[RMDB]
RNA sequence: GGGAACGACUCGAGUAGAGUCGAAAAGGCAGGAGGAGUUCAAAGUUAUUCCUGGGUAGAUAGCAAAUUUGAAGUCAACUUGGGCUAUGUGAGAGAGAAGAUGGAGAACUGACUCCAUAGAAUUGUCAAGCUAGGUGGAUUUCGAUCCACCUAGCUUAAAAGAAACAACAACAACAAC
Reactivity to DMS in 0.01 (KOAc 150mM, MgCl2 10mM, bicine 150mM(pH8.5), 24C), signal-to-noise 1, nucleotides 027 to 126: g000g070c050a090g020g000a080g000g010a040g040u000u000c020a040a140a150g010u000u000a130u040u000c030c030u000g010g000g080u020a030g020a140u000a030g010c020a020a140a130u000u000u000g020a070a090g020u010c040a100a050c080u000u000g010g000g050c060u000a000u000g020u050g000a180g010a050g000a230g020a050a130g010a020u000g000g030a290g010a110a010c200u010g000a060c020u070c000c000a080u000a050g000a100a200u030u020g000u000c140

Background:
An RNA of 177 nucleotides, treated with DMS and read out base by base. In probing experiments dimethyl sulfate is read out at A N1 and C N3, which are open when not base-paired. For DMS the reverse transcriptase was MarathonRT.